Chemical mapping of a 207-nucleotide RNA with 2A3. As a SHAPE reagent, 2A3 marks flexible, mostly unpaired nucleotides at the ribose 2'-OH.
RNA sequence: GGGAACGACUCGAGUAGAGUCGAAAACAGGGAUUUUCGACCUCAAGUUUCUUGAUCUUCUUCUUUGUCUUCCGGAGCUCCGCCUCGAGUUCCUCCGCUUUCUUUCUUCCACUCACCCACUUCUCGAGAAUAUCUUCUCUUCCAUCGCGCUUCUUCUUAGCAUCAUUAACUUCGGUUAAUGAUGCUAAAAAGAAACAACAACAACAAC
Reactivity to 2A3 in 0.01 (KOAc 150mM, MgCl2 10mM, bicine 150mM(pH8.5), 24C), signal-to-noise 1, nucleotides 027 to 156: c020a110g090g000g090a110u010u010u050u070c020g030a040c010c040u070c050a100a050g010u060u130u130c000u080u130g090a170u040c040u120u020c010u090u000c040u100u180u080g030u090c000u100u030c070c010g000g040a020g000c020u010c020c030g030c000c010u050c030g040a030g040u030u020c000c010u020c040c020g020c060u060u060u040c000u030u050u000c010u070u050c050c030a020c020u040c010a080c010c030c090a070c020u100u030c000u000c020g060a030g000a090a080u110a070u200c030u100u000c000u010c020u090u000c050c020a200u110c080g030c020g000c220u000u010c020u000u030c010u030